[RMDB]
RNA sequence: GGGAACGACUCGAGUAGAGUCGAAAAGUGACCACUCUUCUGGAUUGUUUUCACGCAAUGAAGGAACAGUGUCAAUCGUGUGUGAGGAGGUUGUAUCAGAUGACGACAACACCGGCCUGGGUGGAGGCGACAGGGAUAGGUUCGCCUAUCCCUGUCGAAAAGAAACAACAACAACAAC
Reactivity to DMS in 0.01 (KOAc 150mM, MgCl2 10mM, bicine 150mM(pH8.5), 24C), signal-to-noise 3, nucleotides 027 to 126: g010u020g000a080c110c090a030c020u010c140u000u000c000u000g000g000a140u000u000g000u000u000u000u040c180a120c240g000c010a010a020u020g010a300a150g000g000a030a010c080a050g000u000g000u000c040a060a110u020c090g020u010g000u010g000u040g020a060g000g010a090g030g010u000u030g010u000a060u020c090a040g020a090u020g000a060c060g000a050c090a050a060c060a100c040c030g000g000c000c020u020g010g000g020u000g000g010a080g000g020
This 177-nucleotide RNA was probed chemically with DMS.
The RNA was probed in 150 mM KOAc, 10 mM MgCl2 and 150 mM bicine (pH 8.5) at 24 C.
Values cover nucleotides 27 to 126.
For DMS, 5,111 sequencing reads were counted.
The data come from the RNA Mapping Database (RMDB), library OK1LIB.